RNA sequence: GGGAACGACUCGAGUAGAGUCGAAAAUGGUUUCGACGGGAUUGUUGAAGCUUGAGUAGCGGGUAGAGGAUUCUCGUUGGCCUCUUUAAAAAACGAGAAACUAAAAUAAACGCUAACGAAGAUAAUUACGCUUUAGCUGCUGCCUAAUAUAGGCAGCGUAAAAUAACCACUUCGGUGGUUAUUUUACAAAAGAAACAACAACAACAAC
Reactivity to 2A3 in 0.01 (KOAc 150mM, MgCl2 10mM, bicine 150mM(pH8.5), 24C), signal-to-noise 4, nucleotides 027 to 156: u070g000g010u000u020u060c020g020a000c040g050g040g060a130u120u130g040u010u030g020a050a030g010c030u040u070g040a040g030u070a020g030c070g010g000g040u060a010g000a000g010g000a010u030u000c000u000c000g010u000u010g020g020c000c010u000c000u040u210u150a000a010a000a000a000a000c020g000a010g000a110a020a010c040u060a020a020a030a140u120a030a070a000c070g000c010u010a030a010c020g050a080a030g030a090u110a150a070u270u080a060c040g000c030u030u030u020a020g030c030u050g000c000u000g000c020c000u180a300a190u290a120u030a110g000g000c000a000g000c000
Reactivity to DMS in 0.01 (KOAc 150mM, MgCl2 10mM, bicine 150mM(pH8.5), 24C), signal-to-noise 1, nucleotides 027 to 156: u000g000g040u000u000u000c020g010a060c050g030g020g070a120u000u010g000u000u000g010a090a130g020c060u000u020g010a090g030u000a060g040c050g030g010g030u000a080g000a090g020g000a170u000u000c010u010c000g020u000u000g010g010c000c010u000c070u000u000u010a010a060a030a070a030a000c020g010a060g000a040a050a190c080u010a040a020a050a100u000a050a080a080c000g010c020u010a050a090c030g010a100a220g010a120u000a040a080u020u010a010c050g010c020u000u000u000a050g000c010u010g000c000u000g000c010c000u000a070a160u000a170u000a030g020g040c000a020g030c000

This 207-nucleotide RNA was probed chemically with 2A3 and DMS. For 2A3 the reverse transcriptase was SuperScript II with manganese. The RNA was probed in 150 mM KOAc, 10 mM MgCl2 and 150 mM bicine (pH 8.5) at 24 C.